[RMDB]
An RNA of 177 nucleotides, treated with DMS and 2A3 and read out base by base.

RNA sequence: GGGAACGACUCGAGUAGAGUCGAAAAGAUAUGGAUAUCCCUCUGCAACAGCCUGCCGUCGGAAACGACGGCCAGGACAUGCAGAUUGGGAUAUCCUAAGUCAAAACCGUACGCUUCGGCGUACGGACAGGGAGUAUGUGUUCGCACAUACUCCCUGAAAAGAAACAACAACAACAAC
Reactivity to DMS in 0.01 (KOAc 150mM, MgCl2 10mM, bicine 150mM(pH8.5), 24C), signal-to-noise 3, nucleotides 027 to 126: g000a050u010a300u020g010g010a010u000a010u010c000c000c000u000c010u010g010c000a050a100c260a230g020c000c000u010g010c000c000g010u000c000g000g000a130a140a180c020g030a020c010g010g000c120c030a000g010g000a030c110a190u010g010c000a010g010a060u000u020g010g010g010a000u000a010u000c000c010u000a000a110g000u000c030a120a050a090a180c000c010g010u000a000c020g030c010u000u020c230g020g010c000g010u000a000c000g010g010a050
Reactivity to 2A3 in 0.01 (KOAc 150mM, MgCl2 10mM, bicine 150mM(pH8.5), 24C), signal-to-noise 1, nucleotides 027 to 126: g000a020u090a020u120g010g010a000u000a000u010c000c020c000u000c010u000g020c080a300a110c040a300g060c010c010u010g000c000c010g010u000c000g030g000a040a050a080c020g000a010c000g000g010c000c010a000g000g000a010c000a020u230g010c000a000g020a030u080u230g020g000g020a010u010a000u020c000c000u000a030a000g040u000c030a010a020a090a220c010c000g000u010a010c000g000c010u090u150c300g170g000c000g000u010a000c010g000g010a030

The RNA was probed in 150 mM KOAc, 10 mM MgCl2 and 150 mM bicine (pH 8.5) at 24 C. For DMS, 2,987 sequencing reads were counted.